[RMDB]
Structure probing data (DMS) for a 115-nucleotide construct.
The DMS profile rests on 5,088 reads.
The reactions ran in a buffer of 150 mM KOAc, 10 mM MgCl2 and 150 mM bicine (pH 8.5), at 24 C.
Values cover nucleotides 27 to 95.
RNA sequence: GGGAACGACUCGAGUAGAGUCGAAAAGGAUUGGGAACGCUAACCGCGGUUGCAGUCCACACCGCGGUUAGCGUUCCCUGACUGUUCGCAGUCAGAAAAGAAACAACAACAACAAC
Reactivity to DMS in 0.01 (KOAc 150mM, MgCl2 10mM, bicine 150mM(pH8.5), 24C), signal-to-noise 1, nucleotides 027 to 095: g010g000a110u010u010g020g000g010a050a010c020g000c020u010a000a020c020c030g030c000g000g000u000u020g040c110a120g010u030c170c140a070c070a030c000c000g000c000g060g020u000u020a010g000c050g000u020u010c000c020c000u000g000a100c030u010g030u010u020c190g020c050a060g010u070c050a090g000a000